[RMDB]
RNA sequence: GGGAACGACUCGAGUAGAGUCGAAAACUGGACCAUGAGGGCAACCCCACUCCCAGGGGAGAGCUUCUUCUCAGAGGCCCCUCCGUCUUCAAGGGAUACUUCCAGGCUCCCGACAAGACCGCAGAGGAGUGUAUUCAAAGUUCGCUUUGAAUACACUAAAAGAAACAACAACAACAAC
Reactivity to 2A3 in 0.01 (KOAc 150mM, MgCl2 10mM, bicine 150mM(pH8.5), 24C), signal-to-noise 2, nucleotides 027 to 126: c010u030g010g010a040c010c010a050u080g030a040g030g020g020c030a050a070c000c020c010c000a050c060u000c000c010c030a020g020g000g020g000a080g000a020g020c000u050u020c000u140u050c100u040c050a020g030a040g030g060c000c000c000c000u020c010c020g020u000c000u030u030c030a060a050g040g000g000a020u060a180c040u150u030c030c010a020g010g030c020u000c000c000c000g020a000c010a020a060g010a030c030c070g060c090a040g030a060g130g030
Reactivity to DMS in 0.01 (KOAc 150mM, MgCl2 10mM, bicine 150mM(pH8.5), 24C), signal-to-noise 5, nucleotides 027 to 126: c060u010g010g010a060c070c050a090u010g020a020g000g010g000c070a110a130c040c000c010c020a090c120u000c010c020c020a220g000g010g010g000a060g010a110g020c020u010u000c010u000u010c180u010c180a070g010a050g000g000c030c010c000c020u000c020c120g010u000c010u010u000c030a060a190g000g000g010a040u000a040c100u000u010c080c110a080g000g000c140u000c010c010c010g000a220c240a030a060g000a050c040c090g000c130a100g010a140g000g010